[RMDB]
RNA sequence: GGGAACGACUCGAGUAGAGUCGAAAAGAAACGCAAGGCCGCUGACCGACGGGAUAUUGUGGGGCUUACCACAGGGGACGCGGCGUUAUCACUUGCCUUUUAAGCCGACCGUCUGGGCUGCAUGCAAACCACCCAACUAUCUUCGGAUAGUUGGGAAGAGAUGGGAAGAGUUCGCUCUUCCCAUCUCAAAAGAAACAACAACAACAAC
Reactivity to 2A3 in 0.01 (KOAc 150mM, MgCl2 10mM, bicine 150mM(pH8.5), 24C), signal-to-noise 1, nucleotides 027 to 156: g010a010a030a020c070g000c000a030a000g110g000c030c000g000c050u120g070a080c010c030g000a020c050g040g000g050a130u010a100u210u040g020u000g010g010g050g050c140u100u080a050c000c000a010c020a000g050g010g000g010a010c030g030c020g000g070c010g000u050u000a040u080c020a000c070u050u070g000c000c010u000u040u030u100a010a010g010c000c010g050a050c010c000g000u030c070u120g030g140g000c000u000g010c020a020u000g030c020a000a120a070c010c010a020c000c000c000a000a000c000u000a000u000c010u030u030c200g100g050a000u000a000g000u000u000g000g000g000a000a000